[RMDB]
RNA sequence: GGGAACGACUCGAGUAGAGUCGAAAAGAGGUUGUCUAUCCCACAGUUGGAGAGGGGCCCUCUCUGCCCCAGUGGGCGAUCUGGGCUACGGCCAAGUUGCCACCAGCUAGUUCCGCUUGAAAACCACUUCUGGCCCCGUGGGGGACUCAAGUCGCCAGGCUAUUCCUAAAUUCGUUUAGGAAUAGCCAAAAGAAACAACAACAACAAC
Reactivity to 2A3 in 0.01 (KOAc 150mM, MgCl2 10mM, bicine 150mM(pH8.5), 24C), signal-to-noise 1, nucleotides 027 to 156: g080a010g070g000u060u070g010u070c030u020a060u070c000c060c000a060c080a040g210u230u130g060g000a090g020a040g020g000g000g000c000c010c000u020c020u000c020u090g000c000c000c000c020a000g010u100g020g010g000c000g050a090u050c040u010g040g040g020c100u060a070c060g000g040c030c000a250a050g180u300u090g020c000c000a000c000c010a000g010c010u040a010g060u190u290c050c030g060c030u080u090g070a080a140a100a080c040c020a050c060u140u150c040u070g080g000c000c030c000c000g000u090g010g000g000g060g000a000c000u020c100a060a030g000u070c060g030c050c020a000

The data come from the RNA Mapping Database (RMDB), library OK3TST.
Chemical mapping of a 207-nucleotide RNA with 2A3.
The reactions ran in a buffer of 150 mM KOAc, 10 mM MgCl2 and 150 mM bicine (pH 8.5), at 24 C.